[RMDB]
RNA sequence: GGGAACGACUCGAGUAGAGUCGAAAACACUUGUCAUUUUCUAGAUUCGUGUUAAUGACACAUUCAAAUGAAAGAUAUAUUUGAUACUACUCACACAUUCAAUAGCAGUAACAUGGUACACCGAUAGGGUAGGAACUACAUUCGUGUAGUUCCUACCAAAAGAAACAACAACAACAAC
Reactivity to DMS in 0.01 (KOAc 150mM, MgCl2 10mM, bicine 150mM(pH8.5), 24C), signal-to-noise 3, nucleotides 027 to 126: c170a140c100u000u000g000u020c000a030u000u000u000u000c110u000a100g000a060u010u020c110g010u000g000u000u000a070a050u040g010a120c020a000c170a070u030u010c030a030a030a020u000g020a130a040a000g000a120u010a050u000a080u030u000u010g000a010u050a200c050u000a000c020u000c020a100c070a030c140a060u010u010c080a080a070u010a070g000c080a090g020u000a050a090c110a030u000g010g030u010a070c030a040c040c010g000a080u010a060g000
Reactivity to 2A3 in 0.01 (KOAc 150mM, MgCl2 10mM, bicine 150mM(pH8.5), 24C), signal-to-noise 9, nucleotides 027 to 126: c060a020c020u030u060g050u030c010a030u020u020u040u040c070u080a130g050a300u130u120c130g060u070g010u120u050a040a040u090g050a000c020a010c030a110u080u100c030a010a020a070u080g080a100a060a070g180a040u080a020u040a050u230u040u060g060a040u040a100c010u030a030c000u040c010a010c010a010c020a090u180u100c070a090a080u050a160g050c040a010g040u040a090a040c030a050u070g070g020u110a050c040a040c040c030g050a120u110a110g100